[RMDB]
RNA sequence: GGGAACGACUCGAGUAGAGUCGAAAACGAUAUGCAUUGAUCGCAUGUAGUCUAUUAAUGCGUACGAAUUAGUAUGCUCGUAGACUGCAAUAUUGUCAUGAAAAUGACAAUAAUGCAACGAGCAUAAGGUAGUUCUUGAUUUCGAUCGAGGACUACCAAAAGAAACAACAACAACAAC
Reactivity to DMS in 0.01 (KOAc 150mM, MgCl2 10mM, bicine 150mM(pH8.5), 24C), signal-to-noise 8, nucleotides 027 to 126: c040g000a170u000a000u000g000c000a000u000u000g000a010u010c090g000c020a170u040g020u030a090g010u020c010u000a020u000u000a000a000u000g000c000g010u000a010c040g000a150a080u030u040a120g010u010a000u000g010c000u000c010g010u000a050g010a090c290u000g000c010a030a180u000a000u000u000g010u000c010a010u000g010a090a060a120a010u000g000a010c000a000a000u000a010a030u000g010c000a110a030c000g000a010g010c000a000u000a010a060
Reactivity to 2A3 in 0.01 (KOAc 150mM, MgCl2 10mM, bicine 150mM(pH8.5), 24C), signal-to-noise 9, nucleotides 027 to 126: c010g070a200u010a010u030g000c010a000u000u010g010a010u020c040g040c050a030u210g110u300a050g030u030c000u000a010u010u010a010a010u010g000c000g010u010a010c020g020a050a040u080u020a090g140u030a020u010g000c000u000c000g030u040a080g070a270c080u030g000c000a000a010u010a000u010u000g010u000c000a000u020g080a090a070a050a020u010g000a000c000a000a000u020a020a010u020g000c010a010a010c000g000a000g000c000a000u010a020a010